[RMDB]
RNA sequence: GGGAACGACUCGAGUAGAGUCGAAAAGAUAUGGAGGAUGGGACGAGGAUUGCGUUUGACGUGAACUUACAUCGGAAACGAUGUAAGUUCACCGAGCAAUCUACCCACCGUCGCAUCCUCCUAAGUCGGUAAAUGAGAACUUCGGUUCUCAUUUACCAAAAGAAACAACAACAACAAC
Reactivity to 2A3 in 0.01 (KOAc 150mM, MgCl2 10mM, bicine 150mM(pH8.5), 24C), signal-to-noise 2, nucleotides 027 to 126: g030a000u010a030u090g000g000a000g000g010a000u020g040g210g010a000c010g000a030g030g010a010u000u000g040c030g200u200u240u300g300a290c290g000u010g000a000a000c000u000u000a000c010a000u010c010g020g010a000a000a030c000g020a000u040g000u000a000a000g000u010u000c010a000c000c000g010a010g000c010a000a010u000c000u040a040c050c030c030a050c020c000g020u000c000g140c020a010u000c000c000u000c010c010u000a000a000g000u000c060
Reactivity to DMS in 0.01 (KOAc 150mM, MgCl2 10mM, bicine 150mM(pH8.5), 24C), signal-to-noise 2, nucleotides 027 to 126: g010a040u020a180u010g010g010a010g020g020a000u010g000g000g030a020c010g000a110g000g000a010u000u000g010c000g010u010u010u000g020a160c300g000u000g000a000a000c000u010u000a000c000a020u000c000g000g020a120a120a150c000g000a040u000g010u000a000a000g010u000u000c000a010c000c010g000a080g000c010a010a010u010c000u000a060c070c060c120a300c180c000g000u000c000g000c000a000u000c000c000u000c000c000u000a000a050g000u000c050